The record gives the reactivity of an RNA of 177 nucleotides to DMS and 2A3.
The 2A3 profile rests on 1,799 reads.
For DMS, 1,274 sequencing reads were counted.
RNA sequence: GGGAACGACUCGAGUAGAGUCGAAAACGAUUUCGUGAUGGAUGCGCUUUCCAACGGCCGGCGCGUGAAGUGCCUGACCGUCGUCGACGAUUUCACGAAAGAGGCUGUCGACAUCGUCGUCGACCAACGAUCACUCCCGAUUCGUCGGGAGUGAUCGAAAAGAAACAACAACAACAAC
Reactivity to DMS in 0.01 (KOAc 150mM, MgCl2 10mM, bicine 150mM(pH8.5), 24C), signal-to-noise 1, nucleotides 027 to 126: c020g020a140u000u000u000c020g020u000g000a040u000g010g010a120u020g000c070g020c150u000u000u010c090c130a070a060c000g040g040c020c080g040g000c010g000c000g000u000g000a050a130g000u000g020c010c000u000g000a020c000c050g000u000c090g000u000c050g000a050c050g000a260u040u000u000c010a000c060g000a000a010a030g000a200g010g010c120u020g020u000c010g000a030c030a010u000c070g020u010c090g010u000c000g000a020c000c230a080a090
Reactivity to 2A3 in 0.01 (KOAc 150mM, MgCl2 10mM, bicine 150mM(pH8.5), 24C), signal-to-noise 2, nucleotides 027 to 126: c010g040a020u010u040u000c010g000u030g020a030u020g060g070a050u130g020c030g000c100u140u100u010c050c030a050a020c000g030g000c010c020g000g000c000g000c010g040u050g230a130a030g040u030g000c000c000u100g110a240c000c020g010u040c030g070u030c010g040a060c000g040a050u060u040u000c020a000c010g000a010a040a000g040a040g030g060c120u080g090u030c020g030a010c050a060u120c110g170u000c070g000u010c000g040a020c000c010a090a080